[RMDB]
Description
An RNA of 177 nucleotides, treated with DMS and read out base by base. Reactivities are rounded to 0.1 and cut off at 0 and 3. The data come from the RNA Mapping Database (RMDB), library TTRINS. The DMS profile rests on 3,921 reads. Conditions: 150 mM KOAc, 10 mM MgCl2 and 150 mM bicine (pH 8.5), 24 C.
RNA sequence: GGGAACGACUCGAGUAGAGUCGAAAAGAUAUGGAGCGGUACAGGGUGAUGACCAAGCUAACGGGUAACUAUUUCGGAAACGAAAUAGUUACCCGUUAGCUUGCAAGCCCGUACCCGCUCCUAAGUCCAUUAAUCAUAUCUUCGGAUAUGAUUAAUGAAAAGAAACAACAACAACAAC
Reactivity to DMS in 0.01 (KOAc 150mM, MgCl2 10mM, bicine 150mM(pH8.5), 24C), signal-to-noise 3, nucleotides 027 to 126: g000a090u000a300u000g010g010a030g020c010g000g010u000a000c030a150g020g000g050u000g010a140u020g000a250c300c010a010a030g030c000u000a010a030c000g040g000g000u000a000a030c000u000a000u000u010u010c040g030g000a100a070a290c020g000a000a020a020u000a020g010u000u000a000c000c000c000g000u010u010a000g000c000u000u000g000c010a060a280g000c000c000c010g020u000a000c090c030c040g020c000u010c000c010u000a000a050g000u000c020